Record summary:
The record gives the reactivity of an RNA of 177 nucleotides to DMS and 2A3. The data come from the RNA Mapping Database (RMDB), library OK1LIB. DMS adducts were read by reverse transcription with MarathonRT. For 2A3, 2,557 sequencing reads were counted.
RNA sequence: GGGAACGACUCGAGUAGAGUCGAAAAAGUGCGUCAUUCUUCAUGCACUGAGCACAAUCACAGUCGCAGUCACUGUUCAAGUCACGUUCACAGUGACAGCCACAUUCCAUUGGCAUCAGACGAAGAGAUGAUAGCUGGGGUUCGCCCCAGCUAUCAUAAAAGAAACAACAACAACAAC
Reactivity to DMS in 0.01 (KOAc 150mM, MgCl2 10mM, bicine 150mM(pH8.5), 24C), signal-to-noise 3, nucleotides 027 to 126: a010g020u010g000c010g010u010c060a070u010u010c080u000u000c060a100u020g030c060a020c010u000g010a130g000c030a080c100a070a060u000c110a070c200a110g010u000c180g020c000a210g010u000c000a000c020u010g000u010u040c150a050a040g000u020c130a080c280g020u040u040c130a020c000a050g000u010g000a020c000a060g000c000c050a000c040a080u000u000c160c300a090u010u000g000g000c010a130u010c010a040g020a120c080g010a010a070g000a080g010
Reactivity to 2A3 in 0.01 (KOAc 150mM, MgCl2 10mM, bicine 150mM(pH8.5), 24C), signal-to-noise 5, nucleotides 027 to 126: a000g090u060g010c030g110u080c060a150u100u030c020u050u040c030a050u140g020c070a010c030u020g030a010g000c030a010c010a180a070u120c020a030c020a180g020u040c040g020c050a010g000u000c000a000c010u030g030u100u090c120a090a070g090u180c070a050c220g160u170u160c080a010c000a010g000u000g000a000c000a000g000c010c020a040c000a090u120u070c030c000a020u030u110g010g000c020a110u050c010a040g040a030c050g020a040a010g060a000g000